Notes
The record gives the reactivity of an RNA of 177 nucleotides to DMS and 2A3. The RNA was probed in 150 mM KOAc, 10 mM MgCl2 and 150 mM bicine (pH 8.5) at 24 C. For 2A3, 1,577 sequencing reads were counted. It was measured as part of the RMDB library OK1LIB. For 2A3 the reverse transcriptase was SuperScript II with manganese.
[RMDB]
RNA sequence: GGGAACGACUCGAGUAGAGUCGAAAAAGUGGCGCCCAAAAUGGGAAGCCCUAUUCCAGCGAGGAGACUUUCUCCCAACUGCAAAACCGAAGAAGGGCUUCGUCUUCAGGGGCAACAGGUUUUGCUGCCUGCGUAGGUAGUUCGCUACCUACGCAGGAAAAGAAACAACAACAACAAC
Reactivity to DMS in 0.01 (KOAc 150mM, MgCl2 10mM, bicine 150mM(pH8.5), 24C), signal-to-noise 1, nucleotides 027 to 126: a090g000u090g040g120c240g090c050c000c020a040a010a050a220u050g000g000g000a030a040g000c000c000c000u000a050u050u000c000c020a210g000c120g030a160g000g000a090g000a090c160u000u100u030c010u010c020c050c070a180a040c110u000g020c040a000a000a040a020c050c010g000a080a040g080a100a020g000g000g000c000u000u010c000g000u040c030u000u060c200a160g000g000g000g000c030a010a170c160a160g010g000u010u000u000u000g000c000u070g010
Reactivity to 2A3 in 0.01 (KOAc 150mM, MgCl2 10mM, bicine 150mM(pH8.5), 24C), signal-to-noise 3, nucleotides 027 to 126: a010g130u200g030g000c020g080c000c000c010a090a100a020a130u300g030g000g000a100a030g000c020c000c000u010a050u020u040c030c010a050g050c110g050a140g050g000a000g030a090c090u140u180u000c010u050c020c010c000a070a030c010u010g000c010a000a000a050a030c040c000g010a070a050g090a100a080g140g010g000c010u010u000c020g120u030c060u150u140c060a090g010g010g010g010c020a010a010c010a020g000g030u020u010u000u010g000c010u000g050